[RMDB]
RNA sequence: GGGAACGACUCGAGUAGAGUCGAAAAGAUUAUGUGGGAGAUGCGCCCGGUCGUGUCACUGGAAACAGAAUUGCGAGUCGCUCGCCCUAGCGAUAUUGAUGUGUACAGUAGCGUACACUGUGCUACUUUAAGGUAUCAUGACGAUACCACGUCAAAACAUCCAUAUGGCAUUCGUGCCAUAUGGAUGAAAAGAAACAACAACAACAAC
Reactivity to DMS in 0.01 (KOAc 150mM, MgCl2 10mM, bicine 150mM(pH8.5), 24C), signal-to-noise 2, nucleotides 027 to 156: g020a150u000u010a040u020g010u010g000g000g010a000g030a060u010g020c030g020c090c010c030g030g060u010c010g050u010g010u010c000a110c060u020g010g020a150a120a180c050a070g010a040a080u020u010g020c040g000a040g000u000c000g010c000u010c020g020c000c010c020u000a090g020c050g010a080u000a130u000u000g040a050u000g020u000g020u010a050c080a100g010u000a090g020c070g010u000a140c050a080c100u010g020u000g020c010u020a060c060u010u020u000a080a130g030g020u000a000u000c010a140u000g020a180c150g000a050u000a020c000c020a050c100g010u010c040a030a060a080a220
Reactivity to 2A3 in 0.01 (KOAc 150mM, MgCl2 10mM, bicine 150mM(pH8.5), 24C), signal-to-noise 5, nucleotides 027 to 156: g020a040u160u140a080u270g060u150g010g040g010a080g020a050u070g020c030g030c030c060c060g020g030u060c030g010u020g060u090c020a010c070u050g010g060a070a090a030c030a050g110a120a090u150u160g030c030g020a000g030u020c010g000c020u040c020g060c000c000c020u020a020g000c000g050a030u020a090u130u080g050a040u040g040u030g000u070a030c000a080g050u080a020g060c050g020u090a030c090a040c080u060g040u080g030c020u010a070c000u050u090u100a130a030g000g000u010a010u020c050a110u230g140a050c140g000a000u000a000c000c000a010c020g030u010c000a000a000a050a080